RNA sequence: GGGAACGACUCGAGUAGAGUCGAAAAGAUAUGGAAUCAUGAAACUCUACGGAUCGCGAUAAGUCCCAGUCGGAAACGACUGAAGGACUUUUGACGCGGCACGUAGAGUUUCAUGAUUCCUAAGUCACUAAAUCGUGUUGUUCGCAACACGAUUUAGAAAAGAAACAACAACAACAAC
Reactivity to DMS in 0.01 (KOAc 150mM, MgCl2 10mM, bicine 150mM(pH8.5), 24C), signal-to-noise 2, nucleotides 027 to 126: g030a050u000a300u000g000g000a010a010u000c020a000u000g010a000a000a010c000u000c000u000a000c000g010g020a040u000c020g080c000g000a170u000a030a010g020u000c000c000c010a010g020u000c000g010g000a120a100a240c000g000a040c000u000g020a180a200g000g000a030c030u010u000u020u020g000a180c120g000c000g000g000c300a020c000g000u000a030g000a010g010u000u000u000c020a000u000g000a000u000u000c000c000u000a000a020g020u010c050a260